[RMDB]
RNA sequence: GGGAACGACUCGAGUAGAGUCGAAAAACUGCGGUAUUCGUACCGCAGUACAUAAAAAGGAUAAAAUACCAGUAGCCCGAAACGCAAGCGAGCACUACUCGCGCAAGAACCACUUCGGUGGUUCUAAUGAUACUGAGCUAUUCGUAGCUCAGUAUCAAAAAGAAACAACAACAACAAC
Reactivity to DMS in 0.01 (KOAc 150mM, MgCl2 10mM, bicine 150mM(pH8.5), 24C), signal-to-noise 3, nucleotides 027 to 126: a010c000u000g000c000g010g010u000a020u000u030c250g020u000a000c000c000g000c010a000g000u000a010c140a050u010a060a090a060a130a100g000g010a100u010a070a070a120a160u000a080c010c030a130g000u010a140g000c040c000c010g010a050a060a070c170g010c110a090a070g010c000g010a020g030c060a140c270u010a180c010u000c000g010c020g000c220a150a060g000a010a000c000c000a000c000u000u030c150g010g010u000g000g000u000u000c000u010a030a120
Reactivity to 2A3 in 0.01 (KOAc 150mM, MgCl2 10mM, bicine 150mM(pH8.5), 24C), signal-to-noise 3, nucleotides 027 to 126: a020c010u010g010c000g000g020u010a020u010u140c140g020u040a020c000c010g030c000a010g000u010a000c000a010u250a030a080a010a000a000g060g000a040u190a150a270a140a020u190a180c000c020a030g090u060a040g060c020c010c010g030a110a070a000c040g000c100a130a070g000c010g010a000g030c080a050c160u190a110c000u080c010g010c000g010c000a030a020g000a000a000c000c000a010c050u050u070c230g100g000u000g000g030u010u000c010u000a010a010